[RMDB]
Chemical mapping of a 207-nucleotide RNA with DMS and 2A3. For DMS, 8,100 sequencing reads were counted. For 2A3 the reverse transcriptase was SuperScript II with manganese. Conditions: 150 mM KOAc, 10 mM MgCl2 and 150 mM bicine (pH 8.5), 24 C.
RNA sequence: GGGAACGACUCGAGUAGAGUCGAAAACAUCCCAGUUCGCUGGGAUGAAAAAGCGUACUACACCUUUUGACGUGACCAUGAUGGAGUCCCAAAUAGGACGAUGAAAUCACAUUUCACGAUAAGGUGUAUCGCAAAAAACGUCUGUUCGCAGACGUAACUGUAAGCGUAAGUUCGCUUACGCUUACAGAAAAGAAACAACAACAACAAC
Reactivity to DMS in 0.01 (KOAc 150mM, MgCl2 10mM, bicine 150mM(pH8.5), 24C), signal-to-noise 4, nucleotides 027 to 156: c020a040u000c000c000c000a080g010u000u000c290g030c010u010g040g000g010a040u000g000a020a040a070a140a130g020c040g020u010a100c070u000a040c010a000c010c000u000u010u010u020g020a270c080g020u000g020a030c300c300a090u000g000a040u000g000g010a170g010u000c000c000c000a050a170a230u010a090g000g010a040c000g010a140u010g010a090a100a030u000c000a030c020a300u000u000u000c020a040c010g000a130u000a010a030g000g030u000g000u000a010u010c020g040c020a000a020a050a060a090a030c030g010u010c000u000g030u010u010c290g010c020a020g010a020c000g010u000a020a100
Reactivity to 2A3 in 0.01 (KOAc 150mM, MgCl2 10mM, bicine 150mM(pH8.5), 24C), signal-to-noise 7, nucleotides 027 to 156: c010a000u010c000c000c000a000g020u050u060c210g020c140u020g010g000g000a000u030g070a090a000a000a000a000g040c050g020u120a120c070u030a020c030a020c020c000u020u050u060u160g300a120c020g000u000g010a010c040c070a060u050g000a010u000g010g030a010g010u000c010c020c020a220a300a120u300a140g010g000a020c040g090a130u080g020a020a040a020u020c010a020c020a160u090u130u020c000a000c010g020a040u030a040a000g000g000u010g010u000a010u030c010g000c000a100a080a000a030a000a000c010g000u000c000u010g060u070u070c250g000c120a010g000a000c000g000u010a020a060